Source information: Source: RMDB library 15KREP, as collected in RNAgym. The record gives the reactivity of an RNA of 177 nucleotides to 2A3 and DMS. DMS adducts were read by reverse transcription with MarathonRT. Values are in units of 0.01, from 0 to 300, in steps of 10. Reactivities are given for positions 27 through 126.
RNA sequence: GGGAACGACUCGAGUAGAGUCGAAAAAAGGUACUAUGUACUUUGUGCCUAGAGCUAAGUCUGUUGUCUCAAGGAUUGGAGACUCCAUCUUUACAGGCUGUACUGGCUCUUGGAACAAGGUCACUCACCUCCUAAUCUGGUUCGCCAGAUUAGGAGGAAAAGAAACAACAACAACAAC
Reactivity to 2A3 in 0.01 (KOAc 150mM, MgCl2 10mM, bicine 150mM(pH8.5), 24C), signal-to-noise 2, nucleotides 027 to 126: a000a000g140g000u090a090c080u090a050u150g030u020a020c000u040u010u020g000u000g040c000c020u010a000g000a010g000c030u090a060a000g020u000c020u050g090u100u090g010u060c030u020c070a060a040g120g040a130u180u270g070g010a080g060a070c040u040c010c030a070u000c000u080u090u050a010c010a020g000g000c000u010g060u080a070c080u060g010g000c000u000c000u010u030g000g010a000a000c010a000a010g000g000u010c000a010c020u060c010a060
Reactivity to DMS in 0.01 (KOAc 150mM, MgCl2 10mM, bicine 150mM(pH8.5), 24C), signal-to-noise 1, nucleotides 027 to 126: a060a020g000g000u010a110c170u000a140u000g020u030a020c010u000u000u000g010u000g020c010c020u000a020g000a020g010c010u010a040a060g020u010c070u000g000u000u010g010u010c090u010c140a090a030g000g020a040u000u020g030g010a150g000a150c200u010c030c060a050u000c040u000u000u000a030c070a030g000g000c000u000g000u010a040c160u000g010g000c000u000c020u020u020g000g000a030a020c000a000a020g000g000u000c050a080c160u020c200a080
The reactions ran in a buffer of 150 mM KOAc, 10 mM MgCl2 and 150 mM bicine (pH 8.5), at 24 C. In probing experiments dimethyl sulfate is read out at A N1 and C N3, which are open when not base-paired.